Chemical mapping of a 177-nucleotide RNA with DMS and 2A3.
Conditions: 150 mM KOAc, 10 mM MgCl2 and 150 mM bicine (pH 8.5), 24 C.
For 2A3 the reverse transcriptase was SuperScript II with manganese.
Reactivities are given for positions 27 through 126.
The DMS profile rests on 1,361 reads.

[RMDB]
RNA sequence: GGGAACGACUCGAGUAGAGUCGAAAAGUUGGCGUUCGCGCCAACAAAGCGGACACUUUCAAGGGCUGCACCGCUGCCGCAAAAGCAACCCUAUGCCACCGCCCCAAAACUUGAGCUUCGGCUCAAGCUUAAUGUAGGCGUUCGCGCCUACAUUAAGAAAAGAAACAACAACAACAAC
Reactivity to DMS in 0.01 (KOAc 150mM, MgCl2 10mM, bicine 150mM(pH8.5), 24C), signal-to-noise 2, nucleotides 027 to 126: g000u000u000g010g010c010g010u020u030c190g090c030g000c000c000a000a000c000a010a120a100g000c010g020g010a080c090a010c020u000u000u010c040a080a050g020g000g030c010u000g010c000a030c020c020g020c020u000g010c040c020g010c260a040a010a040a060g000c020a030a020c010c000c010u000a030u010g000c070c020a060c030c040g000c000c000c000c040a080a060a030a300c010u000u000g000a010g000c000u000u020c190g050g000c000u000c000a000a000g010
Reactivity to 2A3 in 0.01 (KOAc 150mM, MgCl2 10mM, bicine 150mM(pH8.5), 24C), signal-to-noise 2, nucleotides 027 to 126: g000u000u010g010g030c030g010u050u050c250g000c010g000c060c000a010a010c010a020a010a010g030c000g000g000a030c020a010c190u010u080u070c050a040a050g020g000g000c010u000g000c000a000c010c000g000c070u070g000c020c010g110c090a060a050a010a020g010c000a010a010c010c000c020u030a070u070g000c020c010a120c030c040g070c000c000c000c000a020a050a020a090c010u000u000g000a000g000c010u030u070c250g070g010c000u000c010a010a000g000